RNA sequence: GGGAACGACUCGAGUAGAGUCGAAAAUGCGGCAGCAAUCCUGCCAUCCGGUGUUGUUUUUUGGCAGUCGCGCUGCGCUAACGCAACCGCUCCUGCUACAGCAGAAAACAGCUCUCACCCAUGGAGGUUGACUCCAAAAUUUCGAUUUUGGAGUCAAAAAAGAAACAACAACAACAAC
Reactivity to DMS in 0.01 (KOAc 150mM, MgCl2 10mM, bicine 150mM(pH8.5), 24C), signal-to-noise 5, nucleotides 027 to 126: u020g020c090g000g010c010a030g020c090a160a180u040c170c000u000g000c000c000a080u010c070c080g000g000u010g000u000u000g000u000u000u010u010u020u010g000g000c010a000g000u010c140g000c220g020c030u000g010c040g040c140u020a080a150c080g000c030a020a070c120c020g020c030u000c070c010u000g000c020u020a100c170a120g010c070a050g000a030a020a050a030c060a050g020c020u000c030u000c050a100c020c010c010a110u020g010g000a060g000g000
Reactivity to 2A3 in 0.01 (KOAc 150mM, MgCl2 10mM, bicine 150mM(pH8.5), 24C), signal-to-noise 3, nucleotides 027 to 126: u090g000c060g060g010c000a000g000c020a000a050u060c000c010u030g000c010c020a030u050c040c040g070g050u060g010u030u000g000u010u030u010u020u080u020g040g000c010a010g010u040c040g000c010g000c050u000g000c010g010c040u060a100a030c040g010c010a020a000c010c030g020c020u020c010c020u020g050c010u080a100c050a080g030c020a010g080a040a050a010a020c020a020g000c020u020c000u020c020a080c010c010c010a020u080g050g040a030g080g000